Source information: This 177-nucleotide RNA was probed chemically with 2A3 and DMS. The reactions ran in a buffer of 150 mM KOAc, 10 mM MgCl2 and 150 mM bicine (pH 8.5), at 24 C. For 2A3, 40,469 sequencing reads were counted.

RNA sequence: GGGAACGACUCGAGUAGAGUCGAAAAGGGACCAGCCCUUCCGUAUAGACACUGCGAUAGUCCUGCAGGCGGAAAGGCGCUGGCAGAGCCUCCGGGUAGAGGGUGGCCGUCAGAGCCACGAGGGGCACACCAUUAUAUGGUUCGCCAUAUAAUGGUGAAAAGAAACAACAACAACAAC
Reactivity to 2A3 in 0.01 (KOAc 150mM, MgCl2 10mM, bicine 150mM(pH8.5), 24C), signal-to-noise 9, nucleotides 027 to 126: g020g010g060a060c000c000a000g000c010c000c000u000u000c010c000g050u020a100u070a140g300a070c060a010c120u020g010c020g100a120u140a150g190u240c060c100u130g000c000a020g040g000c010g000g010a070a060a060g040g000c100g000c030u000g010g000c010a010g020a010g070c000c030u030c020c020g010g010g050u120a090g050a080g080g040g010u030g010g000c020c000g120u160c090a070g020a030g040c000c000a010c010g020a060g000g000g010g000c030a010
Reactivity to DMS in 0.01 (KOAc 150mM, MgCl2 10mM, bicine 150mM(pH8.5), 24C), signal-to-noise 9, nucleotides 027 to 126: g000g000g010a180c010c020a030g000c000c000c000u000u000c010c010g010u000a180u010a100g010a150c280a300c010u000g010c030g010a150u010a140g010u010c210c100u010g020c020a020g000g010c010g000g000a030a030a040g010g010c160g020c010u000g000g010c120a040g010a120g010c030c020u000c020c020g010g000g000u010a120g000a130g000g000g010u000g010g010c010c010g010u000c200a130g000a150g010c010c000a030c070g010a130g010g010g010g000c100a300